[RMDB]
RNA sequence: GGGAACGACUCGAGUAGAGUCGAAAAGAUAUGGAUCGGUUGGCAUGGGAGCUGGUAGGUCGGAAACGACCUAACAGCUUUGAUCAUGCCACCCGAUCCUAAGUCAAACGGUGACUUCGGUCACCGACUCUACGUAUGGCUUCGGCCAUACGUAGAGAAAAGAAACAACAACAACAAC
Reactivity to 2A3 in 0.01 (KOAc 150mM, MgCl2 10mM, bicine 150mM(pH8.5), 24C), signal-to-noise 1, nucleotides 027 to 126: g020a000u040a030u200g000g000a000u010c010g040g000u010u020g010g000c010a010u020g010g000g010a020g000c030u030g040g010u010a000g030g010u010c040g010g050a080a100a070c000g000a000c000c010u010a020a010c000a000g000c030u020u040u010g020a010u010c010a010u010g000c030c000a000c000c000c010g000a000u020c000c000u020a020a000g050u020c030a120a060a050c040g000g000u000g020a030c000u010u220c300g130g000u000c000a010c020c000g010a020
Reactivity to DMS in 0.01 (KOAc 150mM, MgCl2 10mM, bicine 150mM(pH8.5), 24C), signal-to-noise 2, nucleotides 027 to 126: g000a040u010a300u000g000g000a020u000c010g010g000u010u010g000g000c000a030u010g000g010g000a010g040c010u000g010g020u010a000g000g020u000c000g030g000a050a120a300c000g000a010c000c000u010a000a020c000a010g000c020u000u000u010g000a070u030c000a020u010g000c000c000a000c040c000c000g000a010u000c000c000u000a010a060g000u000c050a100a150a240c030g000g070u000g010a020c000u000u010c200g030g000u000c000a010c000c000g000a030